The record gives the reactivity of an RNA of 177 nucleotides to 2A3 and DMS.
Values cover nucleotides 27 to 126.
The data come from the RNA Mapping Database (RMDB), libraries RFM100 and RFMREP.
Conditions: 150 mM KOAc, 10 mM MgCl2 and 150 mM bicine (pH 8.5), 24 C.
For 2A3 the reverse transcriptase was SuperScript II with manganese.
The DMS profile rests on 1,341 reads.
RNA sequence: GGGAACGACUCGAGUAGAGUCGAAAACGACAGGCGGUGUCGAGACGUCCCCUUCGGAGAGAGUAUACGCUUUCGAUGAUGUAGGGGCAACCCCGACACCGCACAACCCCGAUGGGUCAGCGGUCUUCUGAUAGGUAGGUUUCGACCUACCUAUCAGAAAAGAAACAACAACAACAAC
Reactivity to 2A3 in 0.01 (KOAc 150mM, MgCl2 10mM, bicine 150mM(pH8.5), 24C), signal-to-noise 7, nucleotides 027 to 126: c050g050a020c020a060g040g040c010g000g000u010g000u000c000g000a030g020a040c060g240u290c000c010c010c000u020u010c010g010g000a010g000a000g000a000g030u060a100u100a300c200g010c000u010u000u000c020g070a090u010g000a010u020g060u060a050g000g000g000g000c020a040a070c010c000c000c000g000a000c000a010c020c000g000c000a000c000a000a000c000c000c010c010g120a140u210g050g030g020u030c010a020g050c030g070g020u010c010u020u000
Reactivity to DMS in 0.01 (KOAc 150mM, MgCl2 10mM, bicine 150mM(pH8.5), 24C), signal-to-noise 1, nucleotides 027 to 126: c160g000a110c190a130g020g070c010g000g000u000g020u000c000g090a020g000a150c300g000u030c060c000c000c000u000u000c000g050g040a300g000a030g030a000g000u040a220u050a230c280g000c000u000u020u000c000g000a300u040g000a000u000g030u040a070g010g030g000g000c100a010a190c100c030c050c000g000a000c000a000c000c000g040c000a000c140a080a140c110c010c000c060g000a070u000g000g050g000u010c060a080g000c190g010g000u000c080u010u030